[RMDB]
RNA sequence: GGGAACGACUCGAGUAGAGUCGAAAACCACUCGUCGACGGACGGUCGACGGUCUGGGCGAACCGCAACGCCGGCACCGUCACCGCGGUGUACGACGACCUCGGUCCCGCCGGUGACCUGUUCACCGACCGGAACGACCGGCUCGAGCUGCGGUUCGAUGAACCUACUUAUUCGUAAGUAGGUUCAUAAAAGAAACAACAACAACAAC
Reactivity to DMS in 0.01 (KOAc 150mM, MgCl2 10mM, bicine 150mM(pH8.5), 24C), signal-to-noise 3, nucleotides 027 to 156: c000c000a030c040u010c010g000u000c010g000a040c000g030g020a150c150g030g030u000c000g020a040c000g040g020u000c010u010g000g000g010c030g010a030a030c010c020g010c020a090a080c040g020c030c010g010g000c010a040c010c010g020u000c070a300c260c190g000c010g020g020u000g020u010a060c020g030a120c020g020a060c030c030u000c010g010g000u000c000c020c070g010c010c000g030g010u000g010a020c050c120u000g010u000u000c000a020c000c010g000a020c030c030g000g010a050a040c040g000a040c050c040g020g010c040u000c050g020a210g020c010u000g030c010g020g010u000u010c010g010
Reactivity to 2A3 in 0.01 (KOAc 150mM, MgCl2 10mM, bicine 150mM(pH8.5), 24C), signal-to-noise 6, nucleotides 027 to 156: c000c000a020c030u060c010g010u000c000g000a010c020g120g180a120c160g170g010u000c000g010a010c010g010g000u080c110u080g040g050g040c020g000a010a000c010c010g030c020a060a060c050g040c030c000g010g000c010a010c020c010g070u110c090a060c130c050g000c010g000g000u020g010u070a300c000g030a010c020g020a020c020c030u210c030g010g000u020c020c000c000g010c010c000g000g000u000g000a030c060c160u180g070u160u020c010a010c000c000g020a040c030c020g040g000a100a070c120g000a030c010c010g000g010c040u020c040g040a030g010c010u030g000c020g020g000u010u000c010g000

The record gives the reactivity of an RNA of 207 nucleotides to DMS and 2A3. For DMS the reverse transcriptase was MarathonRT. Reactivities are given for positions 27 through 156. For DMS, 14,194 sequencing reads were counted.